RNA sequence: GGGAACGACUCGAGUAGAGUCGAAAACGGUCUGCGCUGGGGUCACACGGUUCAGGCUUAAAUUACGUGAAUCGCUUCGGUCCGGCCCGUUGAUCGGCUAAGUCCGGGGUUAAAUCCAAAUAGAUCAACUAAGCAUGUAGAACUGACUGCGGAGGGCGUACCGGAUUUAGUUCGCUAAAUCCGGUACAAAAGAAACAACAACAACAAC
Reactivity to 2A3 in 0.01 (KOAc 150mM, MgCl2 10mM, bicine 150mM(pH8.5), 24C), signal-to-noise 2, nucleotides 027 to 156: c010g000g000u020c040u010g020c030g000c080u010g020g010g010g050u010c020a020c000a000c020g000g000u000u010c010a020g000g030c030u090u100a050a100a030u260u110a080c090g030u030g050a000a030u030c060g000c030u020u040c020g040g000u010c000c080g020g000c000c030c010g000u000u000g010a030u020c000g010g000c010u060a080a000g000u000c010c010g000g000g050g000u030u070a030a070a080u120c140c060a010a010a000u020a000g000a000u010c000a010a010c000u020a050a030g020c000a060u170g050u090a030g010a110a060c040u080g080a030c020u030g050c020g020g030a020g040g040g020c050